RNA sequence: GGGAACGACUCGAGUAGAGUCGAAAAGGUGCCUGGUACGAAUCCUGGGGUCGUCGUUGUACUCGUGCGAGUAAUCUACGAUCGCUACAACGCGCUAAGCAAUGGAGAUGAUUCUUGAGGGAAGCAAUUCUGCAGAGACAUCUCCACCCUGGGGUGGGACAUGUACAUCCUUCGGGAUGUACAUGUCAAAAGAAACAACAACAACAAC
Reactivity to 2A3 in 0.01 (KOAc 150mM, MgCl2 10mM, bicine 150mM(pH8.5), 24C), signal-to-noise 3, nucleotides 027 to 156: g140g000u090g020c010c010u050g050g050u180a070c050g040a080a030u020c000c000u000g000g000g000g000u060c020g020u050c020g010u000u010g010u010a010c010u030c040g030u020g080c160g010a050g060u140a090a240u050c030u040a010c010g000a010u090c150g000c050u000a000c000a000a000c000g010c010g000c070u100a040a010g060c070a070a170u200g010g000a010g010a000u020g010a050u100u070c010u030u000g000a160g000g070g040a000a030g050c060a050a200u000u040c020u100g090c030a010g000a000g010a010c000a000u020c000u000c000c000a010c000c000c000u000g000g020g000g000u040g020g000
Reactivity to DMS in 0.01 (KOAc 150mM, MgCl2 10mM, bicine 150mM(pH8.5), 24C), signal-to-noise 1, nucleotides 027 to 156: g050g000u000g000c010c010u000g030g020u000a210c060g000a130a080u000c010c010u020g050g000g030g020u010c000g010u010c040g000u030u000g020u010a020c080u000c020g060u000g000c120g030a100g040u010a110a130u000c000u000a060c020g000a100u000c110g110c140u010a010c020a070a100c020g020c000g050c080u000a060a090g020c080a080a160u000g030g000a030g010a010u000g000a050u020u000c000u000u040g000a300g050g010g010a040a130g020c200a080a170u000u000c040u010g020c040a300g000a020g030a040c000a000u000c000u000c010c010a000c010c010c000u000g010g000g000g030u000g020g000
The data come from the RNA Mapping Database (RMDB), library ARCHII. Structure probing data (2A3 and DMS) for a 207-nucleotide construct. The reactions ran in a buffer of 150 mM KOAc, 10 mM MgCl2 and 150 mM bicine (pH 8.5), at 24 C. Reactivities are given for positions 27 through 156. For 2A3 the reverse transcriptase was SuperScript II with manganese.